[RMDB]
RNA sequence: GGGAACGACUCGAGUAGAGUCGAAAAGUGAAUGCACCGCAACACCAUGAGUAUCGGAGUCCGCCCUUGCAUUCUGAGCCGCUCCUGACCAUCACCCUCGUAGAACAUUAUUGCCGACGAGUGAAGGCACAGAUGAGUGUUUCGACACUCAUCUGUGAAAAGAAACAACAACAACAAC
Reactivity to 2A3 in 0.01 (KOAc 150mM, MgCl2 10mM, bicine 150mM(pH8.5), 24C), signal-to-noise 6, nucleotides 027 to 126: g110u100g070a100a070u090g010c000a020c040c040g030c030a030a050c020a040c030c010a070u140g060a030g090u100a090u160c050g020g050a030g050u020c030c020g010c010c010c000u010u070g020c020a070u110u010c030u070g050a020g030c010c010g000c020u010c000c010u040g020a050c000c010a040u040c020a060c010c020c000u020c020g020u050a030g030a080a020c030a050u090u140a100u130u240g050c050c020g050a060c020g020a030g040u100g080a050a040g060g010
Reactivity to DMS in 0.01 (KOAc 150mM, MgCl2 10mM, bicine 150mM(pH8.5), 24C), signal-to-noise 4, nucleotides 027 to 126: g000u020g020a060a080u010g010c070a110c040c030g030c080a070a080c070a090c030c050a060u020g000a050g030u030a060u020c040g030g020a120g000u000c020c060g020c050c020c050u000u010g000c040a030u030u000c020u020g000a120g000c010c100g030c050u010c030c000u000g000a090c060c030a050u000c060a050c060c040c000u000c030g010u010a060g010a070a090c100a050u020u020a110u030u000g010c070c020g010a100c070g010a070g010u010g000a100a110g000g000
Chemical mapping of a 177-nucleotide RNA with 2A3 and DMS. The data come from the RNA Mapping Database (RMDB), library OK1LIB. The reactions ran in a buffer of 150 mM KOAc, 10 mM MgCl2 and 150 mM bicine (pH 8.5), at 24 C.